[RMDB]
The data come from the RNA Mapping Database (RMDB), library OK2TRN.
Structure probing data (2A3 and DMS) for a 177-nucleotide construct.
The reactions ran in a buffer of 150 mM KOAc, 10 mM MgCl2 and 150 mM bicine (pH 8.5), at 24 C.
For DMS, 24,529 sequencing reads were counted.
DMS adducts were read by reverse transcription with MarathonRT.
Reactivities are given for positions 27 through 126.

RNA sequence: GGGAACGACUCGAGUAGAGUCGAAAACGUAGAAGUUCAGGUUGCUGCGCUCGCUGCCUUCGUUGACGUGACGUAGUGCGUUGGCGACAACGGCCGGAGUCACCGUCGCGGACAGCACCGACGCGACGUAAAGUGCAGAAUUCGUUCUGCACUUUACAAAAGAAACAACAACAACAAC
Reactivity to 2A3 in 0.01 (KOAc 150mM, MgCl2 10mM, bicine 150mM(pH8.5), 24C), signal-to-noise 9, nucleotides 027 to 126: c040g040u100a050g030a300a060g040u120u110c080a040g050g100u070u060g050c070u050g000c020g000c040u030c040g010c010u010g000c000c020u010u020c010g030u060u300g020a010c020g010u010g010a010c020g060u090a040g030u100g170c000g010u020u020g010g020c030g040a060c020a030a020c030g120g020c020c020g070g250a050g020u020c010a000c040c060g010u000c010g000c000g010g010a020c000a020g010c010a010c020c010g030a020c030g010c010g020a040c050
Reactivity to DMS in 0.01 (KOAc 150mM, MgCl2 10mM, bicine 150mM(pH8.5), 24C), signal-to-noise 9, nucleotides 027 to 126: c080g010u010a070g010a100a120g020u000u010c090a100g010g010u000u000g020c030u010g020c020g010c090u000c090g010c090u000g010c030c090u000u000c020g020u000u010g020a040c050g010u000g010a030c030g010u000a180g010u010g020c000g010u000u000g000g010c270g000a160c050a020a020c020g010g010c020c030g010g010a300g010u000c020a040c090c080g030u000c010g010c010g000g010a030c210a090g010c040a050c140c020g000a060c030g010c010g000a040c110